[RMDB]
RNA sequence: GGGAACGACUCGAGUAGAGUCGAAAAGAUAUGGACGUUAAUAGGGAGCUCCACCUCGGAAACGAGGUGAGAGCAUCGAUCUAUACACGUCCUAAGUCAAAGGUUAUCAUCUUCGGAUGAUAACCAACAUACGCGGUAGGUUCGCCUACCGCGUAUGAAAAGAAACAACAACAACAAC
Reactivity to 2A3 in 0.01 (KOAc 150mM, MgCl2 10mM, bicine 150mM(pH8.5), 24C), signal-to-noise 2, nucleotides 027 to 126: g000a020u020a000u050g000g000a000c000g010u040u030a120a060u040a220g010g010g010a040g020c000u040c010c000a000c020c010u000c000g000g000a020a000a000c010g000a000g030g000u000g010a070g000a000g030c000a010u090c010g000a000u010c000u010a050u040a070c090a020c150g000u010c010c000u000a000a010g000u000c040a080a110a180g020g000u020u000a000u000c000a010u000c010u080u130c300g180g000a010u000g000a000u000a000a000c010c010a000a000
Reactivity to DMS in 0.01 (KOAc 150mM, MgCl2 10mM, bicine 150mM(pH8.5), 24C), signal-to-noise 2, nucleotides 027 to 126: g010a020u000a000u020g000g000a020c010g000u000u000a110a070u000a000g000g020g000a040g000c010u000c000c000a000c010c000u000c010g020g000a000a020a020c010g000a000g010g000u000g000a030g020a010g010c000a060u000c220g000a020u000c000u000a040u020a080c300a060c000g000u010c000c000u000a010a100g000u000c010a130a140a110g010g000u000u000a000u000c000a000u000c020u010u010c300g050g000a030u000g010a010u000a000a000c000c000a040a090